[RMDB]
RNA sequence: GGGAACGACUCGAGUAGAGUCGAAAAGAUUACGUGUCGUUGUGGAAUCGAUACUACGCACGAGAUUCCAAGGUCUCUGUAGUACGUCCGCUGGUGACGUCUUUGGAGUAACGUUCGAUAUACGAAAGGUAACUACUACCUUCGGGUAGUAGUUACCAAAAGAAACAACAACAACAAC
Reactivity to DMS in 0.01 (KOAc 150mM, MgCl2 10mM, bicine 150mM(pH8.5), 24C), signal-to-noise 1, nucleotides 027 to 126: g010a110u020u000a060c210g020u020g030u020c000g040u030u050g020u000g000g060a040a100u030c040g000a070u040a060c140u010a020c020g000c120a040c060g000a130g040a030u000u020c060c060a100a010g040g000u000c000u030c090u010g010u030a020g000u020a020c010g020u000c010c010g010c000u000g000g010u020g000a000c040g010u000c010u030u000u000g020g000a000g010u000a090a010c010g020u000u000c000g000a010u000a080u010a120c000g000a040a070a140
Reactivity to 2A3 in 0.01 (KOAc 150mM, MgCl2 10mM, bicine 150mM(pH8.5), 24C), signal-to-noise 2, nucleotides 027 to 126: g120a040u130u210a120c070g000u050g070u050c060g020u070u120g000u010g020g120a020a020u130c000g070a030u000a040c050u000a000c010g030c040a010c070g030a000g000a060u070u040c110c020a020a020g120g000u000c070u000c020u050g010u010a000g000u010a100c000g000u000c000c020g000c120u050g030g110u110g010a020c010g000u040c000u020u020u060g040g000a040g020u080a020a090c040g010u080u020c050g020a010u050a020u000a160c040g120a080a070a000

Structure probing data (DMS and 2A3) for a 177-nucleotide construct. DMS adducts were read by reverse transcription with MarathonRT. Source: RMDB library OK1LIB, as collected in RNAgym.